[RMDB]
RNA sequence: GGGAACGACUCGAGUAGAGUCGAAAACAGUGGGUUGAUUUUCCUGGUGAAUCCCGGCCUUGUCCUCCGUCACAAGUGUGACAAGUGUCUCGAAAACGUGUUCGCUAUACCCACGUUACAGAUUGGGGUCUGUGACUUAGUUCGCUAAGUCACAGACAAAAGAAACAACAACAACAAC
Reactivity to DMS in 0.01 (KOAc 150mM, MgCl2 10mM, bicine 150mM(pH8.5), 24C), signal-to-noise 1, nucleotides 027 to 126: c130a070g020u020g010g030g020u000u010g000a160u010u000u010u010c010c020u000g000g010u000g010a040a030u000c020c040c080g000g000c020c010u000u000g000u000c010c010u000c000c010g010u030c300a120c100a200a080g020u000g000u020g000a000c000a030a010g000u010g010u010c020u010c140g000a070a070a140a070c260g000u000g000u000u010c060g000c000u000a110u010a070c010c010c000a010c020g010u010u000a130c130a040g010a110u010u030g010g000g020